[RMDB]
RNA sequence: GGGAACGACUCGAGUAGAGUCGAAAAUAGGUUGAAUUCGUUCAACCUACAGGCAAGCAAGCAGCGCAACGAGACAAGGCGAUAAUAAGAUUGCGCAUGCUGAUACAUCGGUCUUCGGACCGAUGAAGUAGAACCGUACAUUCGUGUACGGUUCUACAAAAGAAACAACAACAACAAC
Reactivity to DMS in 0.01 (KOAc 150mM, MgCl2 10mM, bicine 150mM(pH8.5), 24C), signal-to-noise 3, nucleotides 027 to 126: u010a000g000g000u000u010g000a010a020u010u030c240g020u010u000c000a000a020c000c000u000a020c110a100g020g040c160a110a110g020c160a090a020g020c000a050g040c000g010c000a010a010c040g010a130g000a130c200a040a040g010g000c110g000a050u010a030a120u000a070a070g010a180u020u000g020c000g020c010a050u000g000c000u010g010a120u020a170c010a010u000c000g010g010u000c000u000u000c130g010g000a010c000c010g000a000u000g000a050a090
Reactivity to 2A3 in 0.01 (KOAc 150mM, MgCl2 10mM, bicine 150mM(pH8.5), 24C), signal-to-noise 3, nucleotides 027 to 126: u040a000g010g000u000u010g000a000a010u060u090c200g030u050u020c010a000a000c000c010u010a030c010a010g130g060c060a030a080g020c020a050a020g020c020a020g020c000g000c010a020a000c010g040a020g070a130c070a120a090g150g130c100g130a030u060a150a080u090a170a030g190a300u020u010g000c010g000c020a030u040g000c000u020g000a020u030a150c000a000u000c000g020g000u000c000u030u050c160g080g010a010c030c010g000a010u010g000a040a010
An RNA of 177 nucleotides, treated with DMS and 2A3 and read out base by base. 2A3 adducts were read by reverse transcription with SuperScript II with manganese. Reactivities are given for positions 27 through 126. Reactivities are rounded to 0.1 and cut off at 0 and 3. The RNA was probed in 150 mM KOAc, 10 mM MgCl2 and 150 mM bicine (pH 8.5) at 24 C. The data come from the RNA Mapping Database (RMDB), library M2PK50.